Chemical mapping of a 207-nucleotide RNA with DMS and 2A3. The data come from the RNA Mapping Database (RMDB), library OK3TST. High 2A3 reactivity points to a flexible backbone, as in loops and unpaired stretches. For DMS, 4,777 sequencing reads were counted. The RNA was probed in 150 mM KOAc, 10 mM MgCl2 and 150 mM bicine (pH 8.5) at 24 C.

[RMDB]
RNA sequence: GGGAACGACUCGAGUAGAGUCGAAAACUGCCAGGGAGGUGGCGACAGAAGAGGGAAUCUGCUGUUCCCCAAAUGCUGGCCGACGUGUAGACAGCUCUGUGGUCUCUGAGCGUCCUCUCCGAGCCAUCAGCUUGUCAGACAGAGGCGAGGCAGGUCACACUUAUAUCACCUUCGGGUGAUAUAAGUGAAAAGAAACAACAACAACAAC
Reactivity to DMS in 0.01 (KOAc 150mM, MgCl2 10mM, bicine 150mM(pH8.5), 24C), signal-to-noise 2, nucleotides 027 to 156: c060u000g030c010c020a120g010g020g010a120g010g010u010g000g010c040g020a100c020a050g020a090a080g010a160g040g020g000a090a130u000c040u010g020c000u000g020u000u010c000c000c020c060a060a040a090u000g000c020u000g000g010c030c000g020a200c090g000u010g030u010a140g010a050c020a060g010c000u000c080u000g060u000g040g010u010c020u000c020u010g000a060g000c080g000u000c130c080u000c000u010c010c080g000a040g020c010c010a070u000c300a080g000c020u010u000g010u000c030a080g020a110c060a060g010a300g040g000c030g020a130g000g030c030a060g030g000u010c040a300
Reactivity to 2A3 in 0.01 (KOAc 150mM, MgCl2 10mM, bicine 150mM(pH8.5), 24C), signal-to-noise 4, nucleotides 027 to 156: c040u060g010c020c020a060g010g070g020a070g000g070u080g020g040c030g020a020c020a030g070a080a020g050a160g070g030g040a050a100u080c070u150g010c000u080g060u060u050c000c000c000c000a030a130a040u090g020c040u040g000g010c020c010g030a060c030g020u040g020u040a050g010a030c010a020g000c010u040c070u120g040u020g010g080u110c020u000c010u070g000a000g030c050g190u110c010c030u040c000u000c010c010g000a000g000c020c000a070u100c010a050g090c030u140u300g010u020c010a010g040a050c010a000g020a020g020g010c020g040a140g000g000c020a010g010g030u090c050a020